The record gives the reactivity of an RNA of 207 nucleotides to DMS and 2A3.
Conditions: 150 mM KOAc, 10 mM MgCl2 and 150 mM bicine (pH 8.5), 24 C.
2A3 adducts were read by reverse transcription with SuperScript II with manganese.
DMS (dimethyl sulfate) methylates the pairing face of unpaired adenines and cytosines.
The DMS profile rests on 1,471 reads.
Reactivities are rounded to 0.1 and cut off at 0 and 3.
RNA sequence: GGGAACGACUCGAGUAGAGUCGAAAAUUCAGUACGGAACCAGGUCGGAGAACGCCGAGGACUCCAAGGUCCACGGCACGCACUUCCAUGCAGGACUGACUCACUGCAAGCGCGGGCACGAGCUCUCUGGAGACAACCUUCAGAACCACUCCGGUACAUAACCCUUCAGGUUCGCCUGAAGGGUUAUAAAAGAAACAACAACAACAAC
Reactivity to DMS in 0.01 (KOAc 150mM, MgCl2 10mM, bicine 150mM(pH8.5), 24C), signal-to-noise 1, nucleotides 027 to 156: u000u000c040a060g040u000a090c000g020g030a080a220c020c000a090g000g040u010c120g020g010a050g000a110a080c010g030c030c020g020a130g000g000a180c000u050c070c190a150a140g000g000u000c000c040a140c030g020g000c050a050c050g000c020a090c010u000u020c080c060a130u000g090c000a040g000g030a280c000u010g000a190c090u000c030a080c010u010g050c060a110a200g010c060g000c040g030g000g110c030a100c020g040a190g010c020u000c050u000c030u000g010g000a010g000a150c050a080a120c100c040u020u000c030a050g010a180a090c030c000a000c000u040c000c020g000g020u000a130c130
Reactivity to 2A3 in 0.01 (KOAc 150mM, MgCl2 10mM, bicine 150mM(pH8.5), 24C), signal-to-noise 2, nucleotides 027 to 156: u070u040c030a030g060u040a040c040g020g050a010a040c050c040a070g000g080u060c080g050g010a040g010a150a080c090g030c010c010g010a070g000g010a020c040u040c150c110a050a160g070g010u000c010c000a000c000g000g000c010a020c040g030c030a030c020u100u040c060c020a030u070g050c030a020g040g010a080c080u100g060a080c020u100c150a100c010u010g000c020a160a070g000c010g000c000g010g010g050c060a050c090g020a010g040c010u010c010u000c020u030g030g000a010g000a030c060a040a070c010c010u000u000c020a010g000a100a070c010c000a020c020u020c010c020g020g030u020a030c030